[RMDB]
RNA sequence: GGGAACGACUCGAGUAGAGUCGAAAAACUCAUUGCUACAAAAGGUCGAGUGAUAAUUAGUAGCAAUGGCCUGGUAUCGGUAGCCCGCUUCAGCGCCAUCCAUUUUCAGGGCUGGUUCAUUCGGCAGUGAUCCAUAGUAUUUCGAUACUAUGGAUCAAAAAGAAACAACAACAACAAC
Reactivity to DMS in 0.01 (KOAc 150mM, MgCl2 10mM, bicine 150mM(pH8.5), 24C), signal-to-noise 8, nucleotides 027 to 126: a090c130u020c010a010u000u000g000c000u000a000c010a060a060a110a130g010g010u000c010g020a130g020u030g010a030u010a060a060u020u020a160g000u000a010g000c010a010a000u000g010g000c030c010u000g010g020u020a040u010c090g010g010u010a100g000c070c020c040g000c090u010u010c080a070g020c070g000c020c010a050u010c040c030a080u010u010u020u020c110a080g000g000g020c050u010g000g000u020u000c040a040u000u000c040g010g000c050a160g010
Reactivity to 2A3 in 0.01 (KOAc 150mM, MgCl2 10mM, bicine 150mM(pH8.5), 24C), signal-to-noise 9, nucleotides 027 to 126: a000c040u040c030a010u010u020g000c000u000a010c010a020a120a040a030g120g020u030c020g060a080g080u130g040a020u040a220a110u120u130a040g000u000a000g000c000a000a010u000g000g000c000c010u060g050g030u100a090u150c050g010g030u040a040g030c000c000c010g020c020u080u090c040a020g020c010g010c040c000a040u030c020c000a070u080u070u070u140c080a070g000g070g000c020u020g020g030u030u020c020a040u020u020c000g020g000c020a040g070